[RMDB]
RNA sequence: GGGAACGACUCGAGUAGAGUCGAAAAACUCUAGUUAUCCGGGGCGUUUUUCACAAAGUUUGUGUAAGAUGCUUUCCUGGGUCGAUGUGGAUUGUGCCGUGGCCUUUUUCACCACCUUUAUAGCGGUCCUAACAGUUCACUUCGGUGAACUGUUAGGAAAAGAAACAACAACAACAAC
Reactivity to 2A3 in 0.01 (KOAc 150mM, MgCl2 10mM, bicine 150mM(pH8.5), 24C), signal-to-noise 2, nucleotides 027 to 126: a000c070u050c010u010a040g040u080u060a050u060c010c010g020g000g000g010c000g010u040u070u040u080u110c020a020c030a000a170a060g070u110u260u010g030u000g000u000a030a010g000a030u000g000c000u070u110u000c060c040u020g010g000g010u040c030g030a040u110g020u050g010g010a060u000u150g040u100g030c000c030g010u040g080g060c000c030u110u120u050u050u050c100a060c000c000a090c010c010u130u210u060a200u100a050g140c080g000g020u000